RNA sequence: GGGAACGACUCGAGUAGAGUCGAAAAAUGACGCUGGGCCGAGAGAUCCGAAGAACUCCUCUGGAGAUGACUGAAGCGCGCACGGUCAUCGAUGAAAGAGGAGGGAGGAUUGGUGGCCUGUGCUGAAGCGCGCACGGCAACCGAAAGGUGCGAAAAAGAGUGAUAUACAGUUCGCUGUAUAUCACUCAAAAGAAACAACAACAACAAC
Reactivity to 2A3 in 0.01 (KOAc 150mM, MgCl2 10mM, bicine 150mM(pH8.5), 24C), signal-to-noise 4, nucleotides 027 to 156: a010u090g040a020c030g000c010u020g000g010g000c000c010g140a170g030a030g000a240u020c010c000g120a230a050g000a010a000c000u000c000c000u000c000u000g000g010a010g000a000u000g000a000c010u020g030a160a090g010c000g000c000g000c000a020c010g030g000u000c010a000u000c000g210a300u010g000a000a000a000g010a000g000g000a000g000g000g000a000g000g000a000u010u030g020g050u090g020g000c030c000u000g000u000g000c000u010g020a120a050g000c010g000c000g000c000a000c000g000g000c000a010a000c000c000g020a070a030a020g010g000u000g000c000g110a130a010a030a000a010
Reactivity to DMS in 0.01 (KOAc 150mM, MgCl2 10mM, bicine 150mM(pH8.5), 24C), signal-to-noise 1, nucleotides 027 to 156: a110u020g020a150c000g000c020u010g030g010g000c030c000g000a190g000a300g020a030u020c010c000g010a100a090g010a190a280c020u010c000c000u010c020u010g040g010a130g000a050u020g020a070c000u010g000a030a040g030c020g000c070g000c000a300c020g010g020u010c000a010u010c040g020a190u000g010a120a180a000g010a030g010g000a020g030g000g020a050g030g010a080u000u020g020g020u010g010g060c010c010u010g000u010g020c030u000g030a110a030g010c030g030c030g000c020a300c020g000g000c000a030a050c050c020g000a110a120a130g010g000u000g040c020g000a020a100a090a100a150